[RMDB]
RNA sequence: GGGAACGACUCGAGUAGAGUCGAAAAGUGCUUGAGCACUGUCGUUGCGACGAGAGUUCGAUGCGAUCCGGGAUGUCGAUCCGGAAAGACAUCAAAGCAUUUGCUCUCUUUGUGCUCUUGCACGAAAGGGACUGCCGAGGUUCGCCUUGGUAGUCCCAAAAGAAACAACAACAACAAC
Reactivity to 2A3 in 0.01 (KOAc 150mM, MgCl2 10mM, bicine 150mM(pH8.5), 24C), signal-to-noise 9, nucleotides 027 to 126: g000u000g000c000u010u010g000a000g000c000a010c030u040g020u020c070g200u220u300g170c150g010a020c020g000a010g000a000g010u080u240c140g020a010u000g000c010g010a030u030c020c020g050g050g020a070u140g100u240c080g030a070u070c030c020g020g070a040a040a010g090a020c020a030u080c040a050a070a020g010c020a040u030u040u140g010c000u000c000u000c000u080u100u120g000u000g000c000u000c000u000u000g000c000a000c010g000a030a000a000
Reactivity to DMS in 0.01 (KOAc 150mM, MgCl2 10mM, bicine 150mM(pH8.5), 24C), signal-to-noise 8, nucleotides 027 to 126: g030u000g000c000u010u000g000a020g020c000a010c010u020g020u000c030g020u040u020g020c050g020a020c050g000a010g000a020g010u010u020c290g010a010u000g000c000g010a250u030c180c110g010g000g010a030u010g000u020c070g010a130u020c050c070g010g000a060a120a240g000a060c040a010u010c030a070a100a160g020c030a030u000u020u040g000c000u010c000u000c000u000u020u030g010u000g000c000u000c010u010u000g000c000a000c010g000a030a070a100
Structure probing data (2A3 and DMS) for a 177-nucleotide construct. Conditions: 150 mM KOAc, 10 mM MgCl2 and 150 mM bicine (pH 8.5), 24 C. For DMS, 36,472 sequencing reads were counted. Source: RMDB library OK1LIB, as collected in RNAgym. 2A3 adducts were read by reverse transcription with SuperScript II with manganese.